[RMDB]
The record gives the reactivity of an RNA of 177 nucleotides to 2A3 and DMS. The RNA was probed in 150 mM KOAc, 10 mM MgCl2 and 150 mM bicine (pH 8.5) at 24 C. Values cover nucleotides 27 to 126. 2A3 adducts were read by reverse transcription with SuperScript II with manganese. For DMS the reverse transcriptase was MarathonRT.
RNA sequence: GGGAACGACUCGAGUAGAGUCGAAAAUUUGCCUGUGGAUGUGGGGCAUCAUAUACAGCUAAUGAUGUCGAAGUCCAAUCAUCUGGCAUGAUUAAGCCAAAUGCUCUUCUUUGUGCUACUUGCCCCUCUCCCAAGUUUAGUUCGCUAAACUUGGGAGAAAAGAAACAACAACAACAAC
Reactivity to 2A3 in 0.01 (KOAc 150mM, MgCl2 10mM, bicine 150mM(pH8.5), 24C), signal-to-noise 2, nucleotides 027 to 126: u040u020u050g020c030c020u070g030u080g030g000a000u030g070u120g110g230g000g000c000a000u000c000a000u090a040u070a070c070a010g090c070u140a180a000u020g000a000u000g010u010c010g060a030a020g010u060c000c000a000a030u080c060a050u030c040u060g000g000c010a000u060g030a080u110u100a040a000g020c020c000a000a080a000u110g030c080u030c010u210u020c010u050u100u060g040u080g050c000u010a030c020u040u050g030c010c010c030c000u030
Reactivity to DMS in 0.01 (KOAc 150mM, MgCl2 10mM, bicine 150mM(pH8.5), 24C), signal-to-noise 1, nucleotides 027 to 126: u010u000u030g020c030c000u010g010u000g000g000a000u010g000u010g030g020g010g000c000a010u000c000a010u000a080u000a150c300a110g010c170u010a170a030u000g010a040u000g010u020c010g020a150a260g000u000c050c020a040a160u010c040a070u020c070u000g020g020c020a010u020g000a060u000u040a140a150g010c050c040a000a120a040u000g010c110u000c040u000u000c040u000u000u000g000u020g030c020u000a040c180u000u000g000c020c010c020c070u020
The data come from the RNA Mapping Database (RMDB), library 15KREP.